[RMDB]
RNA sequence: GGGAACGACUCGAGUAGAGUCGAAAAUUUGAUGCCUGUGCUCUCAAUGACCGAUUGUCUGGCCGCUGAGACACAUAGGGAUUGUGAUUUUAAUAAACCACUCAUUGAGUGGCCACUUACUGAGUAUUACGUGAAACCUUCGGGUUUCACAAAAGAAACAACAACAACAAC
Reactivity to DMS in 0.01 (KOAc 150mM, MgCl2 10mM, bicine 150mM(pH8.5), 24C), signal-to-noise 4, nucleotides 027 to 129: u000u000u000g080a000u030g040c020c020u030g020u020g010c300u030c000u030c010a000a000u000g000a030c000c030g090a160u000u130g060u020c140u060g040g030c020c020g040c000u000g020a040g000a080c230a090c010a060u050a050g000g000g000a000u000u030g050u000g030a020u020u030u040u020a090a190u020a050a100a130c000c020a080c030u000c010a110u040u040g030a020g040u000g000g000c090c090a000c000u010u010a070c010u030g020a010g030u070a090u050u040a090c200
Reactivity to 2A3 in 0.01 (KOAc 150mM, MgCl2 10mM, bicine 150mM(pH8.5), 24C), signal-to-noise 8, nucleotides 027 to 129: u040u010u130g040a020u040g130c000c000u000g000u000g010c030u000c010u010c020a020a060u050g000a040c010c020g130a120u110u240g150u190c170u140g040g000c000c000g000c010u000g000a000g000a000c000a000c010a020u100a030g000g000g040a010u020u040g060u070g090a020u000u020u030u120a180a170u120a080a030a010c000c000a010c010u000c030a250u030u180g010a000g000u020g030g010c000c000a080c010u070u190a030c040u050g030a000g060u060a080u170u090a050c080

This 170-nucleotide RNA was probed chemically with DMS and 2A3. For DMS the reverse transcriptase was MarathonRT.